RNA sequence: GGGAACGACUCGAGUAGAGUCGAAAACGCUGGGUCGUGUUGCCAGCUAUUUGUGUAGGGAGCUUGUACUGAAGCGCGCACGGUACUGAGCUUUGAUCUACACAAAUAGGGCACUCACGACCUGUGCUGAAGCGCGCACGGCAACCGAAAGGUGCGACUAAAGGCAUUUGUUCGCAAAUGCCUUUAGAAAAGAAACAACAACAACAAC
Reactivity to 2A3 in 0.01 (KOAc 150mM, MgCl2 10mM, bicine 150mM(pH8.5), 24C), signal-to-noise 2, nucleotides 027 to 156: c030g010c010u060g000g000g010u000c000g000u000g010u030u020g000c020c010a160g220c060u000a000u000u020u010g010u000g010u000a000g010g000g000a020g010c000u020u020g010u000a010c000u030g060a200a040g020c000g000c000g000c000a020c030g010g000u010a020c080u170g050a020g020c010u300u180u010g000a000u000c000u000a000c000a000c000a010a000a010u000a000g000g000g000c000a010c050u080c010a000c000g010a000c000c000u010g000u010g000c000u020g030a140a040g000c000g000c000g000c000a000c010g010g000c020a020a020c010c000g060a100a030a010g000g000u040g010c000g030a010
Reactivity to DMS in 0.01 (KOAc 150mM, MgCl2 10mM, bicine 150mM(pH8.5), 24C), signal-to-noise 1, nucleotides 027 to 156: c080g030c060u000g020g030g000u010c010g110u000g000u010u000g100c020c070a300g090c080u000a020u010u000u010g030u000g020u000a010g040g000g000a010g050c020u010u010g000u010a000c020u020g040a050a030g040c010g060c030g000c010a300c050g000g040u000a010c000u000g030a000g030c010u010u000u000g030a010u010c000u000a020c010a010c010a000a030a030u010a000g000g040g050c030a060c110u000c020a020c020g010a010c010c000u000g020u000g010c050u000g010a050a050g000c050g030c040g020c020a240c050g020g020c000a100a130c030c040g010a140a110a120g000g020u000g020c020g020a300

An RNA of 207 nucleotides, treated with 2A3 and DMS and read out base by base. For DMS, 1,997 sequencing reads were counted. The 2A3 profile rests on 3,904 reads. The data come from the RNA Mapping Database (RMDB), library RNAMAK.